[RMDB]
RNA sequence: GGGAACGACUCGAGUAGAGUCGAAAAGAUGUUAUGAUCUAUUUCGAAAGAAAGCUGACUUACUUUAUGGGCGUUGAAGAUCGGACAAAAAGCACUAGGAAAUAGAAAUCCAUUUCAGUGAAUACACCUAUGUGAAGCUUUUCGAAGCUUCACAUAGAAAAGAAACAACAACAACAAC
Reactivity to 2A3 in 0.01 (KOAc 150mM, MgCl2 10mM, bicine 150mM(pH8.5), 24C), signal-to-noise 1, nucleotides 027 to 126: g010a060u090g020u280u120a100u180g020a000u010c000u020a160u000u020u030c050g090a160a070a070g050a060a050a020g070c060u020g150a090c000u030u180a000c000u000u270u200a170u200g100g000g000c090g040u110u120g030a050a000g050a010u120c090g000g000a030c090a010a170a000a030a000g010c020a010c030u010a000g070g040a000a050a050u080a060g020a010a120a020u060c030c020a080u060u050u090c030a020g030u070g160a000a020u030a080c030a020c090
Reactivity to DMS in 0.01 (KOAc 150mM, MgCl2 10mM, bicine 150mM(pH8.5), 24C), signal-to-noise 2, nucleotides 027 to 126: g010a080u010g030u000u020a080u030g010a030u010c020u000a100u010u000u000c020g020a130a110a140g010a060a070a070g030c110u020g000a060c090u000u010a090c050u000u000u010a040u020g000g000g000c060g010u000u010g010a070a070g000a110u000c090g000g010a070c100a050a050a080a100a150g000c020a010c090u040a080g010g000a000a020a040u000a070g010a040a120a120u000c050c040a070u000u000u000c090a070g000u000g000a110a080u000a130c220a080c170